[RMDB]
RNA sequence: GGGAACGACUCGAGUAGAGUCGAAAAUGGGAGCGCUGGGCGCCGGCGUACUGGCCAAUGCGAUCGGGCGCAAAAAGUCGGUGGUGAUGCUGCUCGUCGCCUACACGAUGUUCGCGGUGCUGGGCGCCGCGCACCCGUGGUUCGCCACGGGUGCGCGAAAAGAAACAACAACAACAAC
Reactivity to 2A3 in 0.01 (KOAc 150mM, MgCl2 10mM, bicine 150mM(pH8.5), 24C), signal-to-noise 4, nucleotides 027 to 126: u130g030g030g040a080g030c060g000c030u090g060g050g000c010g010c030c010g110g040c030g010u030a060c020u020g050g010c070c050a090a040u060g040c010g010a010u120c070g030g000g000c030g010c090a000a030a030a020a000g090u130c050g030g060u090g020g040u050g050a050u090g030c090u130g020c000u020c030g000u000c000g000c000c030u070a060c090a020c100g040a050u090g040u040u080c030g000c020g000g000u020g000c010u040g010g010g070c000g020c000
Reactivity to DMS in 0.01 (KOAc 150mM, MgCl2 10mM, bicine 150mM(pH8.5), 24C), signal-to-noise 1, nucleotides 027 to 126: u030g000g000g000a060g000c000g030c000u010g010g000g010c010g000c010c000g010g000c000g020u000a050c060u000g020g010c090c190a120a050u020g030c020g020a060u050c090g000g020g000c000g000c030a000a050a030a160a050g040u020c110g000g030u000g010g000u000g010a180u030g000c070u030g040c020u000c050g010u020c000g000c000c060u030a040c170a220c050g010a130u000g030u000u000c000g000c030g010g010u000g000c070u000g000g030g000c000g000c010